[RMDB]
RNA sequence: GGGAACGACUCGAGUAGAGUCGAAAAUUGGGUCUACGUAUACUAUACCGUGAAAUUAGACCUUGCUGAUGCUUAUCUUUCCUUGGGGGAUGCUGCUCGCGCUGUCAAGGUUUUUGAAGAAGUCAAAAUGCUCCUAUACCUUCGGGUAUAGGAGCAUAAAAGAAACAACAACAACAAC
Reactivity to DMS in 0.01 (KOAc 150mM, MgCl2 10mM, bicine 150mM(pH8.5), 24C), signal-to-noise 1, nucleotides 027 to 126: u010u010g030g000g000u000c010u000a020c180g020u000a080u000a100c130u010a080u000a080c200c090g050u000g000a100a120a200u020u000a020g000a030c030c000u000u000g000c120u010g010a130u010g010c030u000u000a090u010c070u000u000u000c010c020u010u000g000g040g000g010g020a080u000g010c010u000g030c020u010c110g010c030g020c010u000g010u020c030a050a050g020g000u000u000u000u000u000g010a080a200g000a080a100g030u000c080a030a060a100